RNA sequence: GGGAACGACUCGAGUAGAGUCGAAAAGGAGAUCGAAGAUGACCGACGUCAGCACGGUCUGGAUGUAGGUCCGCAUGCAUCCAAGUUGACGAAACUUAACGAUUUCCAAAGCGGACAAGAAGUCAAAAUACGGUAUACUGUUCGCAGUAUACCGUAUAAAAGAAACAACAACAACAAC
Reactivity to DMS in 0.01 (KOAc 150mM, MgCl2 10mM, bicine 150mM(pH8.5), 24C), signal-to-noise 5, nucleotides 027 to 126: g000g010a010g020a010u000c010g000a220a110g010a190u020g000a020c000c030g000a140c060g000u010c170a080g030c110a120c040g010g010u000c000u000g010g000a010u000g030u020a020g010g010u010c000c010g000c000a070u000g000c010a010u000c000c010a050a030g010u000u010g000a110c260g000a120a030a030c030u000u010a120a150c030g000a020u000u000u000c010c010a020a080a100g010c000g000g000a020c010a210a110g010a110a110g010u030c090a070a080a070
Reactivity to 2A3 in 0.01 (KOAc 150mM, MgCl2 10mM, bicine 150mM(pH8.5), 24C), signal-to-noise 6, nucleotides 027 to 126: g020g010a010g000a000u020c010g030a110a070g130a180u180g000a010c000c010g040a060c040g130u200c130a040g030c130a020c020g020g000u010c030u030g000g000a000u000g000u010a000g000g000u010c000c000g000c000a000u010g000c000a000u010c000c000a020a000g010u010u030g060a130c150g060a050a010a000c010u040u010a040a040c020g010a000u000u010u000c000c010a030a080a020g010c010g000g010a010c010a000a040g120a100a010g110u270c150a060a040a030